[RMDB]
RNA sequence: GGGAACGACUCGAGUAGAGUCGAAAAUGUUAUAUUAUGGAACACUAUGACCUCUAUAGUGUUAAUCAAUAUUUAGUAUGAGAGGCAAUCAGAGGGCGCUAUCAUGCAAACUAGGAUUGUCUGCUCAGUCUAGUCUCCCAUUCGUGGGAGACUAGACAAAAGAAACAACAACAACAAC
Reactivity to 2A3 in 0.01 (KOAc 150mM, MgCl2 10mM, bicine 150mM(pH8.5), 24C), signal-to-noise 2, nucleotides 027 to 126: u170g030u080u050a120u000a020u030u140a110u170g080g000a010a000c000a000c000u000a000u060g120a160c070c070u060c090u100a000u000a000g000u000g020u000u060a000a010u240c010a040a070u050a070u030u120u120a070g070u060a040u240g000a000g000a000g050g000c010a000a000u020c000a000g000a000g100g130g000c030g000c000u190a300u300c170a000u250g000c000a000a010a010c000u010a000g080g040a000u000u000g040u000c000u010g010c000u000c040a000
Reactivity to DMS in 0.01 (KOAc 150mM, MgCl2 10mM, bicine 150mM(pH8.5), 24C), signal-to-noise 1, nucleotides 027 to 126: u010g000u000u000a000u000a000u000u000a000u000g000g070a000a000c000a010c000u000a000u000g000a100c160c300u020c150u000a000u000a000g000u000g010u000u000a050a100u000c170a110a000u000a030u030u050u000a050g000u000a010u000g000a070g000a050g010g000c000a020a000u050c040a010g010a000g000g000g000c300g000c000u000a100u000c210a050u170g000c000a120a300a300c000u000a010g000g000a020u010u000g010u000c000u000g000c000u000c000a010
Structure probing data (2A3 and DMS) for a 177-nucleotide construct. For 2A3 the reverse transcriptase was SuperScript II with manganese.